This 177-nucleotide RNA was probed chemically with 2A3 and DMS.
[RMDB]
RNA sequence: GGGAACGACUCGAGUAGAGUCGAAAACCCUGCGCGAGUACAUGAUCGGGAGGGGGACGAAGGGGUUCAUCGAGUGGAUGCGUACGCAGAAAGAGAUCCCCAGGUCCGAUGAGGAGCUGGCAAGGGAUGUACUAUCUGGGUUCGCCCAGAUAGUACAAAAAGAAACAACAACAACAAC
Reactivity to 2A3 in 0.01 (KOAc 150mM, MgCl2 10mM, bicine 150mM(pH8.5), 24C), signal-to-noise 2, nucleotides 027 to 126: c000c000c000u030g010c070g000c010g010a030g050u070a030c020a090u150g020a080u090c030g010g000g030a090g040g020g020g000g020a010c040g060a080a070g000g000g000g000u040u040c030a120u030c130g040a070g160u090g040g090a050u030g030c000g000u050a060c160g000c030a000g130a050a090a000g090a030g010a040u030c010c010c010c000a000g020g080u000c020c000g020a050u060g030a010g060g010a030g030c020u010g010g020c050a050a050g050g000g020a030
Reactivity to DMS in 0.01 (KOAc 150mM, MgCl2 10mM, bicine 150mM(pH8.5), 24C), signal-to-noise 3, nucleotides 027 to 126: c020c000c020u000g010c050g040c060g000a070g040u000a060c130a100u010g000a060u010c060g010g000g030a120g010g000g000g020g010a080c070g020a150a120g000g000g010g010u010u000c070a100u000c060g010a150g010u010g000g000a180u000g010c050g010u000a060c130g020c020a060g010a070a060a120g000a070g000a060u000c020c030c000c000a040g020g030u000c000c010g000a090u000g000a260g020g000a090g000c030u000g000g000c090a100a090g010g000g020a140
The reactions ran in a buffer of 150 mM KOAc, 10 mM MgCl2 and 150 mM bicine (pH 8.5), at 24 C.
2A3 adducts were read by reverse transcription with SuperScript II with manganese.